An RNA of 177 nucleotides, treated with 2A3 and DMS and read out base by base.
For 2A3 the reverse transcriptase was SuperScript II with manganese.
Values are in units of 0.01, from 0 to 300, in steps of 10.
Reactivities are given for positions 27 through 126.
[RMDB]
RNA sequence: GGGAACGACUCGAGUAGAGUCGAAAAGAUAUGGACCCAACAGCAUGAACUACUCGAGCCAUCGGAAACGAUGGCAAUCGAGCAUGACAUGGGUCCUAAGUCAAAGCAGCUAGUUCGCUAGCUGCAACACCCUGAAUCAGUUCGCUGAUUCAGGGUGAAAAGAAACAACAACAACAAC
Reactivity to 2A3 in 0.01 (KOAc 150mM, MgCl2 10mM, bicine 150mM(pH8.5), 24C), signal-to-noise 2, nucleotides 027 to 126: g060a000u070a000u150g020g010a010c030c010c050a070a050c060a070g170c010a030u000g020a090a090c040u180a080c030u300c000g020a060g160c020c000a000u000c030g060g000a110a070a000c020g010a020u000g000g000c020a000a060u010c020g000a010g060c010a000u010g080a140c010a100u100g000g000g000u010c000c000u000a090a010g040u010c030a090a090a050g040c020a000g000c010u020a000g050u070u110c230g040c230u000a010g010c000u010g000c020a000a000
Reactivity to DMS in 0.01 (KOAc 150mM, MgCl2 10mM, bicine 150mM(pH8.5), 24C), signal-to-noise 2, nucleotides 027 to 126: g000a060u000a300u000g000g010a000c010c010c010a020a160c230a300g010c020a000u000g000a100a030c090u010a300c010u000c000g010a010g000c010c000a030u010c000g000g010a130a130a210c000g030a020u000g000g010c020a000a010u000c020g000a000g020c020a000u000g000a040c050a210u000g000g000g000u000c000c010u000a030a110g010u000c030a120a130a090g000c000a000g000c000u010a000g010u000u000c250g040c000u000a020g000c000u010g000c020a050a060